[RMDB]
RNA sequence: GGGAACGACUCGAGUAGAGUCGAAAAAUAGAAACAAUCUGCGUCCGAUGACCCCUAUCGAAUUUAAAAUAUCAAACAUUUGGAUUUAAUCCCUGAGUGAAGAUUGCAGUCGUAAAGUAAAAGGACGCAACUGGGGUAUUUUCGAAUACCCCAGUUGAAAAGAAACAACAACAACAAC
Reactivity to 2A3 in 0.01 (KOAc 150mM, MgCl2 10mM, bicine 150mM(pH8.5), 24C), signal-to-noise 3, nucleotides 027 to 126: a000u160a040g170a040a160a000c030a000a020u050c050u130g020c000g010u000c000c030g010a010u080g030a080c020c020c010c030u040a030u090c010g020a010a020u080u150u160a110a100a080a020u120a010u060c030a070a110a150c050a110u010u010u140g050g000a050u100u180u280a090a170u100c010c030c040u030g020a030g040u040g060a040a080g030a110u020u050g030c060a040g020u000c010g050u030a040a080a120g030u020a010a050a040a010g010g000a000c000g010
Reactivity to DMS in 0.01 (KOAc 150mM, MgCl2 10mM, bicine 150mM(pH8.5), 24C), signal-to-noise 4, nucleotides 027 to 126: a070u030a080g010a160a080a040c090a060a050u020c050u010g010c010g010u000c000c000g000a120u020g000a190c060c020c020c020u020a150u020c050g000a070a030u030u030u020a050a040a060a120u020a030u000c030a070a130a160c040a040u000u030u000g000g010a030u010u020u020a140a100u000c060c020c100u010g010a050g020u000g000a190a160g000a050u010u000g000c110a040g010u010c030g000u020a060a070a130g010u030a020a080a100a140g000g020a000c010g000